[RMDB]
RNA sequence: GGGAACGACUCGAGUAGAGUCGAAAAAGAGUGUCACUUCAACGGUAUCAGAGAGUAGUCCUAUCUUUCCAGUUGCAGAAAGUGGUUUUUACAAACACUGGAUUUCGACUGAUGAUGGUUCAUGUGGGUUAAUCAAGCGGUUCGCCGCUUGAUUAACAAAAGAAACAACAACAACAAC
Reactivity to 2A3 in 0.01 (KOAc 150mM, MgCl2 10mM, bicine 150mM(pH8.5), 24C), signal-to-noise 7, nucleotides 027 to 126: a000g170a020g030u090g040u060c010a020c040u070u050c060a040a040c030g060g020u060a070u110c030a010g060a010g000a010g110u130a010g030u010c040c000u050a080u090c020u030u030u010c020c020a070g010u070u060g090c040a020g050a060a040a010g030u060g060g080u040u010u030u080u190a110c100a020a070a010c020a030c040u040g020g040a030u030u060u070c050g020a060c030u000g020a020u050g010a030u090g090g020u070u060c060a060u160g040u090g080g100
Reactivity to DMS in 0.01 (KOAc 150mM, MgCl2 10mM, bicine 150mM(pH8.5), 24C), signal-to-noise 5, nucleotides 027 to 126: a090g010a070g000u010g000u010c040a040c020u030u000c050a040a120c070g010g000u010a030u000c040a080g030a120g020a060g020u010a060g010u020c020c020u020a060u020c060u000u010u020c040c030a050g000u010u010g000c300a060g010a130a040a010g000u000g000g000u000u000u000u030u040a110c230a060a040a050c010a050c030u000g000g000a130u010u010u010c050g000a090c050u010g010a050u020g010a060u010g010g020u010u000c090a080u030g020u020g010g010
Structure probing data (2A3 and DMS) for a 177-nucleotide construct. Values cover nucleotides 27 to 126. It was measured as part of the RMDB library OK1LIB. The reactions ran in a buffer of 150 mM KOAc, 10 mM MgCl2 and 150 mM bicine (pH 8.5), at 24 C. For 2A3 the reverse transcriptase was SuperScript II with manganese.